Chemical mapping of a 207-nucleotide RNA with 2A3 and DMS. The RNA was probed in 150 mM KOAc, 10 mM MgCl2 and 150 mM bicine (pH 8.5) at 24 C. The DMS profile rests on 4,959 reads. DMS adducts were read by reverse transcription with MarathonRT. It was measured as part of the RMDB library OK3TST.
RNA sequence: GGGAACGACUCGAGUAGAGUCGAAAAGGACAGGACCCGUCCGUACCGGCGACCUUCACGGCCUACCGCAGCUGGUAUCUGGCGUAUAACUACGGACCCCGCGACGGUCCCGCGCGCACAGAAACCGUGCUGACCACGGAAGACAUCACGGGCGGCAUAGGCAAAUAAUUUUCGAAUUAUUUGCCUAAAAAGAAACAACAACAACAAC
Reactivity to 2A3 in 0.01 (KOAc 150mM, MgCl2 10mM, bicine 150mM(pH8.5), 24C), signal-to-noise 3, nucleotides 027 to 156: g070g030a020c080a090g070g050a030c000c000c020g030u000c020c000g000u050a200c030c000g030g020c060g060a100c010c040u140u120c080a070c170g050g000c020c040u090a060c010c030g030c010a000g000c010u050g000g030u020a060u020c000u010g000g000c000g020u040a100u040a240a130c140u160a050c060g010g000a010c000c000c020c090g180c110g090a110c060g010g000u010c000c020c000g010c010g000c000g000c000a230c010a300g010a030a010a010c010c010g090u030g000c000u010g010a080c040c000a040c070g040g000a040a020g050a050c030a070u100c050a020c010g010g000g000c000g000g000c010a080
Reactivity to DMS in 0.01 (KOAc 150mM, MgCl2 10mM, bicine 150mM(pH8.5), 24C), signal-to-noise 3, nucleotides 027 to 156: g020g010a130c040a120g030g010a100c150c000c010g010u000c000c010g010u000a070c070c030g030g020c050g020a040c030c000u010u010c050a100c110g040g000c040c010u000a160c010c000g020c010a100g020c020u000g030g020u000a040u000c010u000g020g000c030g010u000a120u000a120a190c020u000a120c020g020g010a080c010c000c050c080g030c210g010a140c150g020g010u000c020c010c010g020c070g040c030g000c030a200c030a070g000a060a090a120c030c020g010u010g030c020u000g000a040c020c000a140c040g020g000a070a090g010a080c050a120u020c080a110c010g050g040g030c000g000g000c120a130